[RMDB]
RNA sequence: GGGAACGACUCGAGUAGAGUCGAAAACAACGGAUAAAAGGUACGCCGGGGAUAACAGGCUGAUGACCCCCAAGAGUCCAUAUCGACGGGGUUGUUUGGCACCUCGAUGUCGACUCAUCGCAUCCUAGCAUCCUAAAAUGUUCGCAUUUUAGGAUGCAAAAGAAACAACAACAACAAC
Reactivity to DMS in 0.01 (KOAc 150mM, MgCl2 10mM, bicine 150mM(pH8.5), 24C), signal-to-noise 2, nucleotides 027 to 126: c090a110a120c120g000g000a040u000a060a120a100a090g040g000u000a090c060g030c010c030g010g010g000g000a130u000a060a110c210a130g050g020c050u000g000a040u000g010a050c000c000c010c000c030a010a230g000a040g000u000c200c170a070u010a060u000c020g010a210c300g000g000g000g000u000u010g000u000u000u000g040g000c000a070c040c010u000c030g020a030u000g020u000c050g010a030c030u000c020a090u000c130g000c120a050u010c010c030u030a150
Reactivity to 2A3 in 0.01 (KOAc 150mM, MgCl2 10mM, bicine 150mM(pH8.5), 24C), signal-to-noise 2, nucleotides 027 to 126: c020a020a020c010g010g010a030u080a100a170a030a050g070g010u050a060c040g000c000c000g030g000g000g000a030u080a180a080c050a080g230g000c010u030g020a050u030g030a010c000c000c000c000c000a000a000g010a000g040u060c120c040a050u070a020u110c010g030a030c030g000g000g000g000u030u000g070u010u060u100g010g000c010a040c010c010u000c010g050a060u050g080u070c020g030a040c000u030c030a050u080c050g000c050a030u000c010c000u030a040